[RMDB]
RNA sequence: GGGAACGACUCGAGUAGAGUCGAAAAGGCUCAGACUUCGGUCUGAGCCAGCUCUCACGUGAGUGAGAGCACGCCAGCUACGGCUGGCGAGAUUAUGCGUGAGCAUAAUCAAGACUGUCUUCGGACAGUCAGGCGACGUACGCGUCGCCAGGCCUCGUACGCGAGGCCAGUAUCUAUCUUCGGAUAGAUACAAGUUAAGGUCGUGAGACCUUAACAACGCUCAACUCAUGGAGCGCAAGACGAAUAGCUACAUAUUCGACAUGAGUAAGUCUAGCUUCGGCUAGACUAAAAGAAACAACAACAACAAC
Reactivity to DMS in 0.01 (KOAc 150mM, MgCl2 10mM, bicine 150mM(pH8.5), 24C), signal-to-noise 4, nucleotides 027 to 266: g010g020c000u010c000a010g010a020c000u010u010c170g020g010u000c010u000g000a010g000c000c000a010g010c000u000c000u000c000a000c000g000u020g000a160g010u000g000a000g000a010g010c010a050c060g000c030c000a000g010c010u000a100c220g020g010c010u000g020g010c000g010a050g010a000u000u000a000u000g000c000g000u010g000a120g000c000a000u000a010a000u000c010a200a100g000a020c000u000g000u000c000u000u010c170g010g000a010c000a010g000u000c010a030g010g010c010g010a010c010g030u010a110c220g020c030g020u010c000g020c010c010a010g020g000c020c000u000c010g030u020a080c200g010c010g010a000g000g020c000c010a010g000u000a000u000c000u000a000u000c000u000u020c180g000g010a010u000a000g000a010u000a000c000a110a090g010u000u000a010a000g000g010u000c000g010u010g000a100g010a010c000c000u000u000a000a000c000a210a300c020g000c000u000c000a100a030c000u000c000a010u000g000g000a010g000c000g000c140a070a060g030a070c020g010a020a000u000a010g010c290u040a180c140a120u000a010u000u000c000g000a110c010a000u000g000a010g000u000a170
Reactivity to 2A3 in 0.01 (KOAc 150mM, MgCl2 10mM, bicine 150mM(pH8.5), 24C), signal-to-noise 8, nucleotides 027 to 266: g000g000c000u000c000a000g000a010c010u040u160c300g070g000u000c000u000g000a000g000c000c000a000g000c000u000c000u010c000a000c020g100u110g090a090g010u000g000a000g000a000g000c000a010c010g000c000c000a000g000c010u030a040c300g160g000c000u000g000g000c000g000a050g000a000u000u000a000u000g010c020g020u060g040a020g000c000a000u000a000a000u010c030a000a030g010a000c000u000g010u000c010u040u090c240g110g000a000c000a000g000u000c010a010g000g000c000g000a000c010g010u070a020c270g010c010g120u000c000g000c000c000a000g010g000c000c000u000c000g020u040a020c210g010c010g100a000g000g000c000c000a000g000u000a000u000c000u000a000u000c000u020u050c220g110g000a000u000a000g000a000u000a000c010a000a000g000u000u000a000a000g000g000u000c000g010u020g060a050g000a010c000c000u000u000a000a000c000a000a020c010g000c000u000c000a020a030c000u000c000a000u000g000g000a000g000c030g030c180a120a040g100a050c010g000a000a000u020a010g060c070u200a100c150a240u060a060u030u020c000g020a010c000a000u010g000a000g010u010a030
Chemical mapping of a 307-nucleotide RNA with DMS and 2A3. DMS adducts were read by reverse transcription with MarathonRT. The reactions ran in a buffer of 150 mM KOAc, 10 mM MgCl2 and 150 mM bicine (pH 8.5), at 24 C.